The record gives the reactivity of an RNA of 177 nucleotides to DMS and 2A3. For DMS, 1,709 sequencing reads were counted. Conditions: 150 mM KOAc, 10 mM MgCl2 and 150 mM bicine (pH 8.5), 24 C. Reactivities are given for positions 27 through 126. Source: RMDB library OK2TRN, as collected in RNAgym.
RNA sequence: GGGAACGACUCGAGUAGAGUCGAAAAUCGCCGAACUCGCGUGCCUCGGCACCGCCGGUCACGUUGUCGAUGGUCUCGAUGACCCGGUCGAUCUCGCCCACCUUGGUGUGGUUGGCGUAGACAUCGCAUCUCCCGAUUUGUUCGCAAAUCGGGAGAUAAAAGAAACAACAACAACAAC
Reactivity to DMS in 0.01 (KOAc 150mM, MgCl2 10mM, bicine 150mM(pH8.5), 24C), signal-to-noise 2, nucleotides 027 to 126: u000c060g000c030c010g000a050a060c040u000c140g010c020g010u010g010c060c040u000c070g010g010c010a100c190c120g010c000c030g000g010u010c040a100c090g010u000u000g010u000c020g010a110u000g000g000u000c080u000c050g000a040u000g000a180c080c010c080g050g000u000c040g020a070u000c020u000c100g000c050c000c020a040c030c050u000u010g000g000u040g020u020g020g000u010u010g010g000c030g000u000a030g000a100c190a070u010c040g030c130
Reactivity to 2A3 in 0.01 (KOAc 150mM, MgCl2 10mM, bicine 150mM(pH8.5), 24C), signal-to-noise 1, nucleotides 027 to 126: u030c030g000c000c020g010a070a040c060u060c070g020c000g070u000g020c010c020u230c070g020g000c090a300c110c110g000c020c000g030g010u030c040a030c030g000u030u140g110u080c010g050a070u120g030g080u050c040u050c010g060a060u060g080a050c130c000c000g000g050u200c040g010a050u000c030u030c030g060c030c030c000a030c000c040u150u240g220g140u260g100u050g170g000u000u070g020g000c000g010u040a040g000a020c030a090u030c010g000c050